An RNA of 207 nucleotides, treated with 2A3 and DMS and read out base by base. The data come from the RNA Mapping Database (RMDB), library OK3TST. For 2A3 the reverse transcriptase was SuperScript II with manganese.
[RMDB]
RNA sequence: GGGAACGACUCGAGUAGAGUCGAAAAGAUGUCAUUUGGUAAGGCUAUAUCAGGUGGCACUACAGGUACUAUGUCGCAUCAUGGUGCUUGUGAACUCUUGGCUUGAUGCGACAAGUUAGGAGUGUUCUAAGUUACUAUAGCCUUAGUGGUUUAGAAACGAGUCGUCAAUGUUCGCAUUGACGAUUCGAAAAGAAACAACAACAACAAC
Reactivity to 2A3 in 0.01 (KOAc 150mM, MgCl2 10mM, bicine 150mM(pH8.5), 24C), signal-to-noise 7, nucleotides 027 to 156: g090a050u020g020u020c010a020u020u000u040g020g000u030a030a010g010g020c020u020a010u010a000u060c010a000g030g010u020g020g000c020a000c030u110a040c040a080g150g060u110a040c040u080a130u130g010u010c020g010c020a020u030c010a020u110g070g030u150g270c010u050u030g030u060g120a110a070c030u030c000u100u030g020g000c010u000u010g000a000u020g020c010g010a010c010a000a010g000u010u050a070g020g070a100g020u070g060u060u020c020u030a030a020g020u030u030a010c010u000a000u010a000g000c010c000u000u000a010g000u010g020g000u000u020u020a030g000a010a060a010
Reactivity to DMS in 0.01 (KOAc 150mM, MgCl2 10mM, bicine 150mM(pH8.5), 24C), signal-to-noise 4, nucleotides 027 to 156: g000a090u000g010u000c000a030u000u010u000g030g020u000a040a050g010g020c030u000a070u000a030u010c030a020g010g020u010g020g000c000a030c030u000a080c060a080g020g010u000a060c040u000a050u000g010u000c110g040c130a080u000c020a060u000g010g020u010g010c000u000u000g010u000g020a110a100c100u010c020u000u000g010g010c010u000u010g010a110u000g010c120g010a120c030a010a020g010u000u000a070g000g000a070g020u000g020u000u000c030u000a070a040g020u000u000a060c110u000a030u000a050g010c020c030u000u000a100g000u000g020g000u000u000u000a060g010a090a110a220